[RMDB]
RNA sequence: GGGAACGACUCGAGUAGAGUCGAAAAGCGAGAGGUGACAAUCGAUGACCUACCAAGGAGGACCGGAGGCGAAAGCGAUUACCAAGAACUGAUCUGACGAUCAAGCACGUGAGCAGGAGUAUCGAAGAUGGGAGCGUAGUUUCGACUACGCUCCCAUAAAAGAAACAACAACAACAAC
Reactivity to DMS in 0.01 (KOAc 150mM, MgCl2 10mM, bicine 150mM(pH8.5), 24C), signal-to-noise 1, nucleotides 027 to 126: g020c060g000a010g010a170g060g140u030g060a130c260a010a040u010c020g000a160u000g000a130c020c000u000a100c210c100a030a000g010g030a090g040g000a000c050c080g030g090a010g000g010c010g000a030a190a090g060c120g010a050u020u000a120c030c050a010a140g030a020a100c050u000g070a020u000c030u000g000a170c260g000a090u030c030a060a010g000c010a000c120g000u000g000a000g030c050a040g030g000a200g020u000a130u030c150g000a080a140g010